Chemical mapping of a 177-nucleotide RNA with DMS and 2A3.
RNA sequence: GGGAACGACUCGAGUAGAGUCGAAAAGACAUGUUGGUCGAGCGGGAGCGUAUCGAGUCGCGGUACUUCGCACUGGUGGCGCGUGCGAAGUUCACCCUUAAACACGGGCGUGCGUCAUCACCUGCGGUCAUUACGCCCAUUUCGAUGGGCGUAAUGAAAAAGAAACAACAACAACAAC
Reactivity to DMS in 0.01 (KOAc 150mM, MgCl2 10mM, bicine 150mM(pH8.5), 24C), signal-to-noise 3, nucleotides 027 to 126: g010a090c090a060u020g000u010u000g030g020u000c040g010a100g020c060g020g000g010a070g020c050g010u000a120u010c050g020a030g010u000c070g020c090g010g020u010a030c030u000u010c000g000c000a030c040u000g020g000u000g000g010c020g000c060g020u000g020c010g000a040a010g010u010u000c100a200c020c010c030u000u020a090a070a090c150a070c160g000g000g020c050g000u010g030c030g000u000c040a030u030c070a070c090c080u000g010c090g000g010
Reactivity to 2A3 in 0.01 (KOAc 150mM, MgCl2 10mM, bicine 150mM(pH8.5), 24C), signal-to-noise 2, nucleotides 027 to 126: g030a020c060a090u140g060u140u120g200g010u030c050g040a020g010c020g010g000g010a080g000c030g020u080a100u080c010g000a010g020u040c020g030c020g040g000u030a030c000u000u010c000g020c010a000c020u060g050g010u030g010g000c040g000c000g020u030g020c050g000a030a000g010u030u020c030a060c050c000c000u050u190a100a110a000c060a020c080g000g050g000c020g020u040g010c010g020u030c000a030u020c020a050c000c020u070g010c050g040g020